[RMDB]
RNA sequence: GGGAACGACUCGAGUAGAGUCGAAAAGAACGUGAGCGAGCCGUGGGACUUUUUCGAUGAUGGUUGUGUUGCCCGACAAGUCGAUUCGACGACUGGUGCACAUGAAUUGAAGCUUGCCCAAGCUCAACUCACCCGGUUCAUCGGGCAACAGCUGCAGCCCUCUGCUAAGAUUCGUCUUAGCAGAGGGAAAAGAAACAACAACAACAAC
Reactivity to DMS in 0.01 (KOAc 150mM, MgCl2 10mM, bicine 150mM(pH8.5), 24C), signal-to-noise 1, nucleotides 027 to 156: g020a120a060c060g020u000g010a030g080c040g010a070g000c060c000g000u000g040g020g020a080c050u000u000u000u000u020c050g000a070u000g040a150u000g020g000u000u010g040u010g010u000u000g010c010c030c040g000a030c030a050a160g010u010c020g010a300u030u000c060g010a090c040g020a060c000u000g030g020u000g030c080a000c040a120u000g020a050a120u000u070g000a090a070g020c030u010u000g060c050c090c040a190a130g000c020u000c020a080a040c010u000c010a050c020c000c030g010g010u010u010c070a300u010c050g030g010g050c030a030a020c020a080g140c010u000g010c000a180g000
Reactivity to 2A3 in 0.01 (KOAc 150mM, MgCl2 10mM, bicine 150mM(pH8.5), 24C), signal-to-noise 4, nucleotides 027 to 156: g100a070a010c070g020u050g030a020g030c020g020a030g050c020c050g080u120g010g010g030a080c050u120u130u060u080u100c170g040a120u120g010a030u100g090g000u060u040g050u030g010u050u020g000c000c010c040g010a020c070a110a030g000u000c020g110a250u300u220c100g010a020c000g020a010c020u020g040g010u130g040c040a050c010a100u120g070a140a120u030u040g050a200a010g000c020u030u040g050c000c010c020a000a020g000c000u000c000a010a020c030u000c010a030c000c020c000g030g000u050u060c060a030u060c040g000g010g000c000a000a000c010a020g030c040u080g010c020a070g040